[RMDB]
RNA sequence: GGGAACGACUCGAGUAGAGUCGAAAAGAUAUGGAUCUGUAUGCAGCUGCACGAAUUCGGAAACGAACUAUGCAGAACUACUGCGAAGGAUCCUAAGUCAAAAGCAGCGUGGUUCGCCACGCUGCAACUUGGGUAUUUCGUUCGCGAAAUACCCAAGAAAAGAAACAACAACAACAAC
Reactivity to 2A3 in 0.01 (KOAc 150mM, MgCl2 10mM, bicine 150mM(pH8.5), 24C), signal-to-noise 1, nucleotides 027 to 126: g040a030u090a030u130g000g020a000u080c080u280g080u120a050u300g000c010a000g000c030u010g010c020a040c100g240a170a300u020u050c010g000g040a100a020a000c010g010a010a000c040u030a070u000g000c040a000g030a000a030c100u300a040c010u130g000c030g060a080a020g040g030a010u000c020c010u000a060a000g000u040c030a070a000a090a000g100c000a000g000c000g020u010g100g000u060u220c300g170c020c000a000c000g000c000u000g000c000a010a010
Reactivity to DMS in 0.01 (KOAc 150mM, MgCl2 10mM, bicine 150mM(pH8.5), 24C), signal-to-noise 1, nucleotides 027 to 126: g010a010u010a300u000g010g000a000u000c010u000g000u020a240u000g000c040a000g000c000u000g000c030a000c050g000a070a250u010u010c000g020g010a050a150a100c000g000a000a010c070u000a170u010g000c000a000g090a050a050c080u010a260c000u020g010c000g000a150a250g000g000a020u000c000c010u010a050a160g030u050c020a040a130a120a050g010c000a010g040c000g000u000g000g020u000u020c230g030c010c020a020c050g030c000u000g010c000a010a010